[RMDB]
RNA sequence: GGGAACGACUCGAGUAGAGUCGAAAAGAAAGAAAGAAAGCUGACCCUUCUGCUGACGGAUCUUGUGGGGCACCACAGUGCAGAAGGGGAGAGAAGCUUUAAUGCCGACCGUCUGGGCAGCCUUGAAAAAACGGAUUCUUCUUCGGAAGAAUCCGAACAAUACUGUGUACUUCGGUACACAGUAUUGAAAAGAAACAACAACAACAAC
Reactivity to DMS in 0.01 (KOAc 150mM, MgCl2 10mM, bicine 150mM(pH8.5), 24C), signal-to-noise 2, nucleotides 027 to 156: g000a110a070a120g010a120a080a140g000a080a040a030g010c000u000g000a140c000c000c000u010u010c020u000g000c030u010g010a170c070g000g000a080u000c040u020u000g030u000g010g030g000g030c300a110c000c010a010c020a100g010u010g020c000a020g000a070a020g000g000g000g000a020g010a120g020a140a010g010c010u000u000u000a070a080u000g040c010c030g000a080c050c030g040u000c120u010g020g030g000c000a070g000c020c040u000u000g000a000a070a110a100a110a130c000g020g000a050u000u000c000u010u010c000u000u010c300g060g010a040a010g000a020a000u000c000c000g010a010a040
Reactivity to 2A3 in 0.01 (KOAc 150mM, MgCl2 10mM, bicine 150mM(pH8.5), 24C), signal-to-noise 3, nucleotides 027 to 156: g070a000a050a000g070a030a110a000g070a060a030a000g000c030u080g080a110c000c000c000u000u010c010u010g020c030u060g030a040c070g050g020a060u080c060u160u070g010u020g000g020g050g080c130a050c040c000a000c010a030g030u050g040c000a000g000a000a010g000g000g000g000a000g000a000g000a020a000g000c000u060u030u040a090a060u070g010c010c000g030a050c010c010g040u040c040u070g000g040g000c010a020g000c020c030u080u110g060a110a060a010a010a000a010c020g000g000a000u000u010c000u000u000c000u000u030c110g080g000a000a000g000a000a000u000c000c000g000a000a000
The record gives the reactivity of an RNA of 207 nucleotides to DMS and 2A3. It was measured as part of the RMDB library M2RFPK. The 2A3 profile rests on 2,678 reads. The RNA was probed in 150 mM KOAc, 10 mM MgCl2 and 150 mM bicine (pH 8.5) at 24 C.